Annotation
This 177-nucleotide RNA was probed chemically with 2A3 and DMS. Reactivities are given for positions 27 through 126. For 2A3 the reverse transcriptase was SuperScript II with manganese.
RNA sequence: GGGAACGACUCGAGUAGAGUCGAAAAGAUAUGGAGAUGCGAGGACAUGCUAGUUCGGAAACGAAAUAGCAACAGCCUCCCAUCUCCUAAGUCAAAACGAGUUCCGUUGUUCGCAACGGAACUCGAACUGGCUAUAAGAGUUCGCUCUUAUAGCCAGAAAAGAAACAACAACAACAAC
Reactivity to 2A3 in 0.01 (KOAc 150mM, MgCl2 10mM, bicine 150mM(pH8.5), 24C), signal-to-noise 2, nucleotides 027 to 126: g020a000u010a000u050g000g000a000g000a000u000g020c020g010a010g000g050a220c060a120u010g010c000u000a000g040u010u010c000g010g020a000a020a000c010g000a000a000a020u010a000g020c000a020a050c060a070g060c000c000u000c010c010c000a010u010c000u000c000c000u000a010a000g000u010c020a000a020a100a140c030g000a010g010u000u010c010c030g000u000u020g020u030u110c300g000c190a000a000c000g010g010a000a000c000u000c000g000a000a000
Reactivity to DMS in 0.01 (KOAc 150mM, MgCl2 10mM, bicine 150mM(pH8.5), 24C), signal-to-noise 3, nucleotides 027 to 126: g020a020u000a110u010g000g000a020g010a010u000g030c300g000a020g010g040a110c110a070u000g000c000u000a010g000u000u020c010g000g000a030a030a090c000g000a000a010a020u000a000g000c000a010a180c300a070g000c000c000u000c000c090c000a000u000c000u000c000c000u000a000a050g000u000c010a100a030a100a170c030g010a020g010u000u000c000c000g020u000u000g010u000u000c160g010c000a010a010c010g000g000a000a000c020u010c020g010a010a060
For 2A3, 7,381 sequencing reads were counted.